[RMDB]
This 207-nucleotide RNA was probed chemically with 2A3. Values cover nucleotides 27 to 156. 2A3 adducts were read by reverse transcription with SuperScript II with manganese. Source: RMDB library RSTRND, as collected in RNAgym.

RNA sequence: GGGAACGACUCGAGUAGAGUCGAAAAGAUUUGACAAAAUUAUCAACAGAGUAAAGUGCAUGCCGAGGAACGGUUUGCCUCGAUAAAAGCCGUAAAAUAAUAGCUGCAAAUAAUAAACAACACUACGCUUUAGCAGCUUAAAAAACUGUAUAAAGCCGUAAUAUAGGUACUUCGGUACCUAUAUUACAAAAGAAACAACAACAACAAC
Reactivity to 2A3 in 0.01 (KOAc 150mM, MgCl2 10mM, bicine 150mM(pH8.5), 24C), signal-to-noise 2, nucleotides 027 to 156: g040a010u040u050u110g010a000c070a010a140a070a060u180u100a110u120c060a080a120c050a070g090a020g040u120a090a170a030g060u130g050c010a020u090g020c010c010g020a040g000g080a080a070c010g010g010u020u020u070g050c000c000u020c020g040a030u140a110a080a000a000g020c010c010g010u020a060a100a030a000u120a020a040u070a070g030c030u030g000c030a010a020a130u100a030a050u110a120a160a020c040a060a000c040a020c070u180a030c070g000c000u000u000u000a000g010c000a000g000c010u000u000a000a000a000a000a010a000c020u020g000u020a160u010a260a000a000g000c000c020